[RMDB]
RNA sequence: GGGAACGACUCGAGUAGAGUCGAAAAAAAAAAGAUAUGGAGACAUGCUCCGAGAUGAGGCUCGUUGAUCAGCUUCGGAAACGAAGCUGGGAGAGCCUGAGGAGCAACAGCUCCUAAGUCAAAAAAACAUUAGAUUUAGGUUCGCCUAAAUCUAAUGAAAAGAAACAACAACAACAAC
Reactivity to DMS in 0.01 (KOAc 150mM, MgCl2 10mM, bicine 150mM(pH8.5), 24C), signal-to-noise 3, nucleotides 027 to 126: a000a010a050a070a050a100g000a040u010a230u010g000g000a050g030a080c140a130u010g010c000u000c000c000g010a170g010a140u020g010a050g010g020c010u000c000g000u000u000g020a050u010c010a000g010c020u000u010c000g000g000a050a040a110c010g020a000a000g000c000u000g010g000g000a010g010a010g000c010c000u000g010a090g020g000a010g000c000a040a030c180a110g000c000u000c000c010u000a050a100g010u010c000a000a000a060a080a040a060a140
Reactivity to 2A3 in 0.01 (KOAc 150mM, MgCl2 10mM, bicine 150mM(pH8.5), 24C), signal-to-noise 2, nucleotides 027 to 126: a000a000a000a000a010a000g060a030u110a050u130g000g010a000g020a020c050a120u070g010c000u010c010c010g020a070g030a170u300g200a090g000g020c010u000c020g230u260u020g000a010u010c010a000g000c000u000u000c000g000g020a020a030a010c010g010a000a000g020c010u010g000g000g000a050g000a010g000c010c020u000g000a010g010g010a010g000c010a020a040c020a010g010c010u010c000c000u000a090a010g020u010c030a040a030a030a000a010a090a110

Conditions: 150 mM KOAc, 10 mM MgCl2 and 150 mM bicine (pH 8.5), 24 C. An RNA of 177 nucleotides, treated with DMS and 2A3 and read out base by base. DMS adducts were read by reverse transcription with MarathonRT. The 2A3 profile rests on 3,811 reads. Source: RMDB library TTRDEL, as collected in RNAgym.